[RMDB]
RNA sequence: GGGAACGACUCGAGUAGAGUCGAAAACUGCACCACCAGAUCCGUUGGACGAUCAUGUUUUUGAGUCUGAUCGGCACGUAACGCGAAGAAACACAACAUCAUCGAGAUGAUGUGUUAUCGACCUGCCCGUGUUUAUGACGUUCGCGUCAUAAACACGAAAAGAAACAACAACAACAAC
Reactivity to 2A3 in 0.01 (KOAc 150mM, MgCl2 10mM, bicine 150mM(pH8.5), 24C), signal-to-noise 3, nucleotides 027 to 126: c010u020g000c030a020c000c010a000c000c030a030g000a130u080c040c020g030u080u100g040g000a050c020g010a050u050c050a060u130g200u050u090u060u080u240g200a100g030u000c030u020g010a020u060c010g010g000c100a010c080g070u090a070a010c030g030c010g060a080a040g010a020a070a000c000a000c010a000a060c010a000u000c020a010u220c130g110a050g000a300u010g000a030u010g000u020g020u010u010a270u090c030g020a040c000c000u050g040c000c040
Reactivity to DMS in 0.01 (KOAc 150mM, MgCl2 10mM, bicine 150mM(pH8.5), 24C), signal-to-noise 3, nucleotides 027 to 126: c070u000g000c070a080c050c050a090c070c040a080g010a070u000c040c040g020u000u000g010g000a070c080g020a060u000c050a050u010g010u000u000u000u000u000g010a170g010u010c060u000g010a050u000c020g020g020c040a110c080g010u000a060a130c100g020c030g010a060a150g000a070a050a020c020a000c010a010a070c000a010u000c000a140u000c220g030a210g010a040u000g000a060u000g010u010g000u000u000a100u000c020g010a090c090c030u000g020c050c090
Structure probing data (2A3 and DMS) for a 177-nucleotide construct. For DMS the reverse transcriptase was MarathonRT. Conditions: 150 mM KOAc, 10 mM MgCl2 and 150 mM bicine (pH 8.5), 24 C. Source: RMDB library OK2TRN, as collected in RNAgym.